[RMDB]
RNA sequence: GGGAACGACUCGAGUAGAGUCGAAAAAUGGGCCUCAGUUCCGAGCGAAGAGACGAGACGGGGAGGGAUCAGCGCCCGAGAGGGAGUCAAUGGUAAAGAGUGGGAGAUCGUCGGAGGGAAUCAUCCUGCACUAUAGUAAGUUCGCUUACUAUAGUGCAAAAGAAACAACAACAACAAC
Reactivity to 2A3 in 0.01 (KOAc 150mM, MgCl2 10mM, bicine 150mM(pH8.5), 24C), signal-to-noise 1, nucleotides 027 to 126: a000u030g020g050g000c000c000u070c040a060g050u100u070c030c010g030a040g040c040g060a100a000g060a040g000a050c070g010a020g000a020c020g040g010g020g000a060g010g000g000a070u110c080a010g090c010g050c000c020c020g030a070g020a040g000g020g000a000g020u070c030a030a070u080g080g050u170a110a120a000g100a050g030u110g030g010g010a020g010a070u070c030g080u020c030g020g040a050g000g020g020a030a020u050c010a020u050c010c020u010
Reactivity to DMS in 0.01 (KOAc 150mM, MgCl2 10mM, bicine 150mM(pH8.5), 24C), signal-to-noise 1, nucleotides 027 to 126: a100u010g000g020g000c030c010u040c050a100g020u000u000c020c020g070a100g030c070g030a100a060g030a100g010a110c050g010a100g000a080c070g000g000g000g000a120g000g000g000a070u000c130a050g010c090g000c020c050c030g000a080g000a200g010g000g030a060g030u010c080a080a090u000g000g010u020a080a030a040g000a060g050u000g000g000g010a100g010a060u000c090g000u000c050g000g010a050g040g010g010a050a100u000c110a080u010c130c030u000